[RMDB]
RNA sequence: GGGAACGACUCGAGUAGAGUCGAAAACGGCAGCUACGGCUGCCGAAGUAUCGCUUCGGCGAUACACAAUUACCGUUCGCGGUAAUUGAACCUAAUCUACGGAUUAGGACUAGCUACUUCGGUAGCUAGAGCGUCGCUUCGGCGACGCAGACCUUCUACGGAAGGUCACAGUGGCUACGGCCACUGAACCAACACGUGAGUGUUGGACUGCGCCGUACGCGGCGCAGAAGCGGCCAGCUCCAGGCCGCCAAACAAUAUGGAGCACUAAAGGUUCAUUCGUGAACCUUAAAAGAAACAACAACAACAAC
Reactivity to DMS in 0.01 (KOAc 150mM, MgCl2 10mM, bicine 150mM(pH8.5), 24C), signal-to-noise 1, nucleotides 027 to 266: c020g020g020c010a000g000c010u000a050c190g050g000c020u000g000c020c000g000a000a020g000u000a010u000c000g000c000u000u010c160g000g000c000g040a030u000a010c010a260c020a000a060u000u000a000c000c000g020u040u050c260g000c010g010g000u000a000a000u010u010g020a170a300c010c000u020a010a000u010c000u020a130c150g010g010a000u010u010a000g000g000a300c030u000a040g000c000u000a000c000u000u020c200g000g000u000a000g000c010u010a000g000a230g020c000g040u040c000g050c010u000u030c130g020g010c010g030a040c000g000c000a030g000a010c000c000u000u000c000u000a120c100g010g010a000a010g010g010u010c000a010c000a000g050u000g010g000c000u030a160c230g040g020c030c000a000c000u010g000a160a090c000c010a030a000c010a000c000g010u020g000a170g000u000g000u000u000g000g020a110c010u000g010c020g030c080c010g060u000a060c200g010c010g030g050c010g020c000a000g020a180a250g000c010g020g010c000c000a080g010c000u000c000c000a000g000g000c000c060g000c010c160a020a030a050c090a030a020u010a040u000g000g000a050g040c000a120c130u000a050
Reactivity to 2A3 in 0.01 (KOAc 150mM, MgCl2 10mM, bicine 150mM(pH8.5), 24C), signal-to-noise 4, nucleotides 027 to 266: c000g010g010c000a000g000c000u020a070c290g160g000c010u010g000c000c000g000a000a000g010u000a000u000c000g000c020u040u060c240g140g010c000g000a000u010a010c020a000c000a010a000u000u000a010c000c000g030u030u070c260g030c000g110g010u000a000a000u000u020g040a030a020c000c000u000a000a000u000c010u020a030c300g100g000a000u000u000a010g000g010a010c000u000a000g000c010u000a010c010u020u040c260g130g000u010a000g000c000u000a000g000a030g010c000g010u000c000g000c030u050u070c280g100g000c000g000a000c000g020c000a000g000a000c010c000u020u000c000u020a020c210g120g010a000a000g000g000u010c000a000c000a010g000u000g000g000c010u030a080c220g140g000c010c000a000c000u010g000a010a040c000c000a000a000c000a000c010g060u070g110a080g010u010g030u000u000g000g010a000c010u000g000c000g000c010c000g040u070a060c290g040c010g140g030c010g050c000a000g010a030a020g010c000g000g000c020c020a020g000c000u000c000c010a000g000g010c020c030g010c020c000a160a140a040c020a010a000u010a020u040g000g000a000g040c000a000c000u030a020
Notes
This 307-nucleotide RNA was probed chemically with DMS and 2A3. The RNA was probed in 150 mM KOAc, 10 mM MgCl2 and 150 mM bicine (pH 8.5) at 24 C. The data come from the RNA Mapping Database (RMDB), library POS240. For DMS the reverse transcriptase was MarathonRT. For 2A3, 8,402 sequencing reads were counted. 2A3 is a SHAPE reagent: it acylates the 2'-hydroxyl of flexible nucleotides of all four kinds. For 2A3 the reverse transcriptase was SuperScript II with manganese.